[RMDB]
RNA sequence: GGGAACGACUCGAGUAGAGUCGAAAAGAUAUGGAGGUUUGAGCGAUAAGUCGGUGUCGGAAACGACAUGCGACUUUUGACGCUUUAUCUCCUAAGUCAAAGACUGUUAGCUUCGGCUAACAGUCAAGGAUAAUAGUGCGUUCGCGCACUAUUAUCCAAAAGAAACAACAACAACAAC
Reactivity to DMS in 0.01 (KOAc 150mM, MgCl2 10mM, bicine 150mM(pH8.5), 24C), signal-to-noise 2, nucleotides 027 to 126: g010a030u020a220u020g010g000a000g020g000u000u010u000g000a030g030c010g010a210u000a030a010g040u000c000g010g030u000g020u000c000g040g000a060a050a090c000g030a020c000a000u010g020c000g010a020c000u000u000u020u010g000a140c050g000c000u000u000u000a010u000c000u000c000c000u000a000a110g010u010c030a070a150a160g000a010c000u010g010u000u000a000g010c000u010u010c220g040g010c000u000a000a000c000a010g010u000c000a020a030
Reactivity to 2A3 in 0.01 (KOAc 150mM, MgCl2 10mM, bicine 150mM(pH8.5), 24C), signal-to-noise 1, nucleotides 027 to 126: g010a010u030a050u100g010g010a020g040g050u140u270u270g090a040g020c040g030a090u070a300a110g000u000c020g000g000u000g000u010c010g030g010a040a010a030c010g010a010c000a020u110g180c020g020a000c000u020u010u000u030g000a000c010g000c000u000u000u030a010u000c000u000c000c010u000a040a010g020u020c060a190a030a000g000a000c010u000g000u020u010a000g000c000u070u070c300g140g010c000u000a000a010c000a030g000u000c000a010a000